RNA sequence: GGGAACGACUCGAGUAGAGUCGAAAACAACAACGACACCGCCCUCGUGUGGAUGAAAAUGAACCAGACCCUAUUGUUUCUGGGGGCCCCGACGCACCCCCCCAACGGGGGCUGGCGCAACCACGCCGUUUUAAAUAUACUUCGGUAUAUUUAAAACAAAAGAAACAACAACAACAAC
Reactivity to 2A3 in 0.01 (KOAc 150mM, MgCl2 10mM, bicine 150mM(pH8.5), 24C), signal-to-noise 9, nucleotides 027 to 126: c020a010a000c020a030a040c030g090a010c020a020c040c030g020c010c010c000u040c030g040u110g030u040g050g030a050u100g080a080a100a050a100u130g020a030a040c020c010a020g100a190c010c000c010u080a130u090u160g040u030u080u040c080u060g010g000g010g010g000c010c000c020c050g050a060c020g000c020a080c000c000c000c000c000c010c010a030a040c030g010g000g000g010g010c010u010g010g000c010g000c010a020a050c010c010a010c010g020c010c010
Reactivity to DMS in 0.01 (KOAc 150mM, MgCl2 10mM, bicine 150mM(pH8.5), 24C), signal-to-noise 4, nucleotides 027 to 126: c070a080a100c100a080a070c080g000a100c080a070c070c060g010c040c000c010u000c060g000u010g010u010g000g000a070u010g000a070a050a120a100u020g010a090a090c040c030a050g000a090c010c030c030u000a070u040u010g000u000u010u000c060u020g000g000g010g000g000c070c050c040c090g020a060c060g010c040a120c050c010c010c020c010c040c060a040a050c110g000g010g020g000g030c040u000g010g000c140g010c090a070a080c070c050a030c030g010c060c080

The record gives the reactivity of an RNA of 177 nucleotides to 2A3 and DMS. High DMS reactivity at an A or C suggests that its Watson-Crick edge is free. For DMS the reverse transcriptase was MarathonRT. For 2A3 the reverse transcriptase was SuperScript II with manganese. Reactivities are given for positions 27 through 126.